[RMDB]
RNA sequence: GGGAACGACUCGAGUAGAGUCGAAAAACAGGAGCGGUGCACUACGGUUCACCGCUCCUGAACUAGUCUUGCACACAAUGGUAAGCCAGUAGUAAUGACAGUGCAAGUAGGUUAUUACUAUAUUAAAAACAGUUUUAUCACUUCGGUGAUAAAACAACGUGGAAUGGUAGUUCGCUACCAUUCCACGAAAAGAAACAACAACAACAAC
Reactivity to 2A3 in 0.01 (KOAc 150mM, MgCl2 10mM, bicine 150mM(pH8.5), 24C), signal-to-noise 1, nucleotides 027 to 156: a040c000a000g000g000a000g000c090g000g010u010g010c110a000c020u060a060c210g030g000u010u000c000a010c000c000g000c010u000c000c000u000g000a000a000c010u020a020g000u000c010u000u010g000c010a010c040a050c040a100a230u190g180g040u180a160a140g040c060c050a070g080u050a000g010u000a040a010u020g000a000c040a020g010u030g040c000a010a030g000u040a100g040g000u000u020a000u010u040a010c000u000a060u070a080u210u300a060a100a040a030a040c010a010g000u000u000u000u000a000u000c010a000c000u010u040c170g010g000u000g000a000u010a000a000a000a000c000a000a000

An RNA of 207 nucleotides, treated with 2A3 and read out base by base.
For 2A3 the reverse transcriptase was SuperScript II with manganese.
The data come from the RNA Mapping Database (RMDB), library M2RFPK.
The 2A3 profile rests on 552 reads.